RNA sequence: GGGAACGACUCGAGUAGAGUCGAAAACGGAUUCGACAGGCAUUGUCGCGCAUGAACUGCAACUGCUGAGGGAUCAGGAUAAUCAUCCGCAGAUAAAUAUAACUGCUAAAAAUAAUACACAAACUUACGCAAUGGCAGCCUAAACAGCACCAUGCGUCUUUAAGUCGAGGUUCGCCUCGACUUAAAGAAAAGAAACAACAACAACAAC
Reactivity to 2A3 in 0.01 (KOAc 150mM, MgCl2 10mM, bicine 150mM(pH8.5), 24C), signal-to-noise 4, nucleotides 027 to 156: c040g060g040a100u100u110c050g020a030c050a050g040g140c140a150u100u060g040u030c040g000c000g030c060a080u160g050a140a070c040u050g010c050a080a030c090u160g010c010u010g010a010g010g000g010a000u000c000a010g050g010a230u060a050a020u020c010a000u000c010c010g000c010a000g000a020u110a170a170a020u190a030u060a130a080c010u020g010c010u090a000a010a080a010a020u250a070a050u230a090c090a030c020a090a200a020c080u140u090a010c020g000c050a100a080u030g010g000c010a020g000c000c000u020a060a040a000c030a000g010c000a000c000c000a010u000g010c000g030u000